[RMDB]
RNA sequence: GGGAACGACUCGAGUAGAGUCGAAAAGAUAUGGACAAUAUGGAGUUAAUCCCAUCUAUGAAGAAUCAACAUUCGGAAACGAAUGUUGAUUUGGAGAUGGAUUAACGUUGAAAUAUUGUCCUAAGUCCAAUGGUAAUCACUUCGGUGAUUACCAUUGAAAAGAAACAACAACAACAAC
Reactivity to DMS in 0.01 (KOAc 150mM, MgCl2 10mM, bicine 150mM(pH8.5), 24C), signal-to-noise 4, nucleotides 027 to 126: g010a060u000a300u000g000g010a010c000a010a010u000a010u000g000g000a130g000u000u000a010a000u000c200c060c060a010u000c000u010a180u020g020a260a250g000a000a000u000c000a010a010c010a000u000u000c000g010g000a120a110a210c000g010a020a000u010g000u000u000g000a000u000u000u010g000g000a020g010a010u000g000g010a030u000u000a010a000c010g000u000u010g000a140a090a010u000a010u000u000g000u000c000c000u000a020a120g010u000c030
Reactivity to 2A3 in 0.01 (KOAc 150mM, MgCl2 10mM, bicine 150mM(pH8.5), 24C), signal-to-noise 2, nucleotides 027 to 126: g080a040u130a060u250g000g000a010c000a010a000u010a020u050g020g020a090g020u000u000a020a010u070c140c090c040a000u000c020u050a300u180g100a080a060g010a030a010u010c000a000a000c000a000u010u000c000g030g000a090a070a060c000g020a000a000u000g000u000u000g000a000u010u000u000g000g060a020g000a000u000g010g000a000u010u020a010a000c000g040u060u070g020a010a020a000u020a000u020u000g000u020c000c000u010a140a020g050u020c030
Chemical mapping of a 177-nucleotide RNA with DMS and 2A3. For DMS, 5,982 sequencing reads were counted. The 2A3 profile rests on 7,808 reads. For 2A3 the reverse transcriptase was SuperScript II with manganese. For DMS the reverse transcriptase was MarathonRT. Conditions: 150 mM KOAc, 10 mM MgCl2 and 150 mM bicine (pH 8.5), 24 C. Values cover nucleotides 27 to 126.